[RMDB]
Source: RMDB library TTRDES, as collected in RNAgym. An RNA of 177 nucleotides, treated with 2A3 and DMS and read out base by base. For 2A3, 3,381 sequencing reads were counted. For 2A3 the reverse transcriptase was SuperScript II with manganese.
RNA sequence: GGGAACGACUCGAGUAGAGUCGAAAAAAAGAUAUGGAAUCCAUUAGAUCUGAUGACCUAUGUCACAGUUGGGUCGGAAACGACCCAAUCACAGCAUAGCAAGGAUAUUCUGGAUUCCUAAGUCAAAGUUCAGUAUAGGGUUCGCCCUAUACUGAACAAAAGAAACAACAACAACAAC
Reactivity to 2A3 in 0.01 (KOAc 150mM, MgCl2 10mM, bicine 150mM(pH8.5), 24C), signal-to-noise 2, nucleotides 027 to 126: a000a000a000g110a050u100a050u120g000g020a000a000u000c010c000a020u050u070a050g070a100u000c000u040g110a300u080g050a150c000c000u010a010u010g130u180c020a020c010a070g000u000u010g000g000g000u010c000g000g000a060a040a020c000g010a010c020c000c020a000a000u000c000a000c020a000g030c010a000u010a010g000c020a140a300g020g000a000u000a050u080u060c040u030g000g020a000u020u020c000c000u020a120a040g030u010c070a210a030a010
Reactivity to DMS in 0.01 (KOAc 150mM, MgCl2 10mM, bicine 150mM(pH8.5), 24C), signal-to-noise 2, nucleotides 027 to 126: a050a090a040g000a060u000a300u010g030g000a020a010u010c000c000a000u000u000a050g010a060u020c000u000g010a150u040g020a150c300c000u010a010u000g010u000c040a140c300a300g000u000u000g000g010g000u000c000g000g000a100a090a080c000g010a020c000c010c000a010a000u000c020a080c300a230g000c000a010u000a010g010c060a040a150g010g010a030u000a080u010u000c020u010g000g010a000u000u000c000c000u000a030a050g000u000c010a100a110a100